Structure probing data (DMS) for a 177-nucleotide construct. DMS adducts were read by reverse transcription with MarathonRT. The reactions ran in a buffer of 150 mM KOAc, 10 mM MgCl2 and 150 mM bicine (pH 8.5), at 24 C.
[RMDB]
RNA sequence: GGGAACGACUCGAGUAGAGUCGAAAAAUGCAAACGUCUGGGUUUCGUGACAGGCGAGCCGUUCUUUACGACUUGGUUCGUUGUCAACGAAACCUGCACGAUCUGCAAAAAGCCAGGUUCGCCUGGCGAUCUAAGGCUCCUUCGGGAGCCUUAGAUCAAAAGAAACAACAACAACAAC
Reactivity to DMS in 0.01 (KOAc 150mM, MgCl2 10mM, bicine 150mM(pH8.5), 24C), signal-to-noise 1, nucleotides 027 to 126: a110u000g000c000a000a020a070c000g010u000c030u010g010g000g010u000u000u000c000g000u000g000a010c000a020g010g030c010g010a010g020c000c000g000u000u000c070u010u010u030a130c270g000a020c120u010u010g020g000u010u000c010g010u000u000g000u000c020a070a050c000g000a000a030a000c000c010u020g020c300a010c000g010a090u000c060u000g000c000a000a080a090a090a180g010c000c000a010g000g000u000u000c190g010c010c000u010g010g010c030